RNA sequence: GGGAACGACUCGAGUAGAGUCGAAAAGUGAAAGCUCCUUCUCUCGCAAUGUGUAACUCAUGAUUCUCAUGACCCCUGGUUGGAGAGAUCCGGACUAGGAGACAGGGGGCCUCUGAUUCUGCCAGCCAAAACUGUCGUAAGUUCGCUUACGACAGAACAAAAUCGAGAUGUUCGCAUCUCGAUUUUGAAAAGAAACAACAACAACAAC
Reactivity to 2A3 in 0.01 (KOAc 150mM, MgCl2 10mM, bicine 150mM(pH8.5), 24C), signal-to-noise 3, nucleotides 027 to 156: g060u080g050a110a030a020g030c010u010c000c010u050u000c020u000c000u000c020g090c080a060a140u110g050u010g010u130a070a040c020u020c040a020u020g040a130u260u040c090u030c060a020u030g050a080c000c000c000c050u030g070g000u030u050g010g010a040g000a020g000a070u020c050c030g060g040a060c050u070a050g030g010a040g010a010c040a060g020g000g000g000g010c010c000u010c020u040g070a110u090u010c010u070g030c020c020a030g000c010c000a040a080a080a090c000u000g000u000c000g000u000a000a000g000u020u080c150g010c130u000u000a010c010g000a000c000a000g000a000a000
Reactivity to DMS in 0.01 (KOAc 150mM, MgCl2 10mM, bicine 150mM(pH8.5), 24C), signal-to-noise 2, nucleotides 027 to 156: g030u010g010a080a100a060g000c000u000c010c020u000u000c020u000c020u000c030g040c060a120a070u000g030u010g050u020a070a070c020u000c030a050u010g010a090u000u010c100u010c010a100u000g010a160c020c000c010c010u000g000g020u010u010g000g010a110g020a130g000a080u000c020c020g010g020a070c070u000a170g000g000a120g010a060c020a100g000g000g020g030g020c090c020u000c050u020g000a180u000u000c000u000g030c040c020a120g000c020c040a050a030a050a170c010u000g010u000c010g030u010a000a020g010u010u000c290g030c010u000u000a000c000g000a020c010a000g010a030a110